[RMDB]
RNA sequence: GGGAACGACUCGAGUAGAGUCGAAAAUCCGUUGUCUUCGGACAACGGAAAAGAAGCGCCGACACAAAAGCACGAGCUCGCCGUGACGCGCAAAGGCGAUAAAAAGCUCAAACUUCGGUUUGAGCAAGUAGCUAAUAUUGUUCGCAAUAUUAGCUACAAAAGAAACAACAACAACAAC
Reactivity to DMS in 0.01 (KOAc 150mM, MgCl2 10mM, bicine 150mM(pH8.5), 24C), signal-to-noise 6, nucleotides 027 to 126: u000c010c000g020u000u010g000u000c000u000u010c210g020g000a010c000a000a010c000g010g000a000a020a060a100g010a150a190g000c020g020c020c040g020a140c200a060c090a050a110a110a100g010c030a040c100g000a110g000c070u000c050g010c080c030g010u000g020a070c090g010c100g010c050a040a060a160g010g010c020g000a070u010a050a080a080a100a070g010c010u000c000a000a000a010c000u000u010c200g030g010u000u000u000g000a010g010c000a010a030
Reactivity to 2A3 in 0.01 (KOAc 150mM, MgCl2 10mM, bicine 150mM(pH8.5), 24C), signal-to-noise 6, nucleotides 027 to 126: u010c000c000g000u000u000g000u000c020u030u060c250g090g000a000c000a000a000c020g010g020a020a040a000a010g030a110a030g010c010g010c060c060g170a040c030a000c010a140a180a020a000g030c010a010c070g020a050g050c020u030c040g020c020c010g020u040g050a070c040g010c000g000c040a000a040a070g020g000c010g000a000u160a030a110a010a010a000g000c000u010c000a000a010a000c010u040u060c220g070g000u000u000u010g010a000g000c000a000a010